[RMDB]
RNA sequence: GGGAACGACUCGAGUAGAGUCGAAAAACCUAACCUUUCGAGGUUAGGUAAAAAAACCUUUGUGAAACACUUCUUUGAUCGAUAGGGUACCCAUUGGGUACCUAUCGGGAGAAGGGUUUCACUCUGGUAAAAAUCCUCCAGUUUCGACUGGAGGAAAGUUUCAAGCAGGUUUCGACCUGCUUGAAACAAAAGAAACAACAACAACAAC
Reactivity to 2A3 in 0.01 (KOAc 150mM, MgCl2 10mM, bicine 150mM(pH8.5), 24C), signal-to-noise 1, nucleotides 027 to 156: a000c040c010u040a040a020c020c000u110u100u060c220g110a000g000g000u000u000a000g000g010u000a230a030a000a000a000a000a000c020c000u050u000u010g010u030g000a000a000a000c010a010c020u030u000c000u100u080u120g160a180u190c060g020a030u020a050g300g050g000u050a010c030c030c090a300u200u300g040g020g020u020a010c000c000u000a000u000c000g000g000g010a000g000a010a000g000g000g010u000u000u010c000a000c000u000c000u020g020g010u060a140a120a100a030a130u000c000c000u000c000c000a000g030u070u110u280c230g130a000c000u000g000g000a000g000g000a000a030a020